[RMDB]
RNA sequence: GGGAACGACUCGAGUAGAGUCGAAAAAUACACCAGCAGUAGGACUCAGCGACCGUCACAACAAGGUUGUGCUGGUCUCCGACGGUCGUAUAGCCCUGUCUUGCAGGUUGCCUUGCACUGACGUGCCACACCAUUUACAGAUUCGUCUGUAAAUGAAGGUUAUACUCCUGUUCGCAGGAGUAUAACCAAAAGAAACAACAACAACAAC
Reactivity to 2A3 in 0.01 (KOAc 150mM, MgCl2 10mM, bicine 150mM(pH8.5), 24C), signal-to-noise 5, nucleotides 027 to 156: a000u120a010c050a030c030c000a000g000c000a000g030u100a020g000g030a040c010u020c070a000g000c000g000a000c000c000g010u000c020a050c040a230a120c090a300a110g100g000u070u030g020u050g020c020u020g010g020u010c010u010c010c010g000a000c000g000g000u000c000g000u040a030u050a040g020c010c000c000u010g020u040c040u040u110g020c020a020g020g030u120u160g050c020c020u030u070g000c000a040c080u100g070a040c100g040u050g030c020c010a110c000a020c040c000a000u000u000u010a000c000a010g020a030u030u100c140g100u010c070u000g000u010a000a000a000u010g010a040a030
Reactivity to DMS in 0.01 (KOAc 150mM, MgCl2 10mM, bicine 150mM(pH8.5), 24C), signal-to-noise 2, nucleotides 027 to 156: a130u000a070c090a190c000c020a100g000c020a050g020u010a040g020g020a030c000u010c130a200g010c010g000a010c020c000g000u000c030a170c080a060a040c070a080a110g020g020u000u010g020u010g040c000u000g030g000u000c050u000c090c030g020a040c020g000g010u000c010g010u000a160u010a030g010c000c000c010u010g000u010c030u020u000g030c040a090g010g020u000u000g020c010c100u000u000g030c010a060c040u000g020a070c130g000u010g030c010c090a090c050a110c130c010a010u000u000u000a010c010a010g010a060u000u020c300g020u000c000u000g020u010a010a000a010u000g000a090a130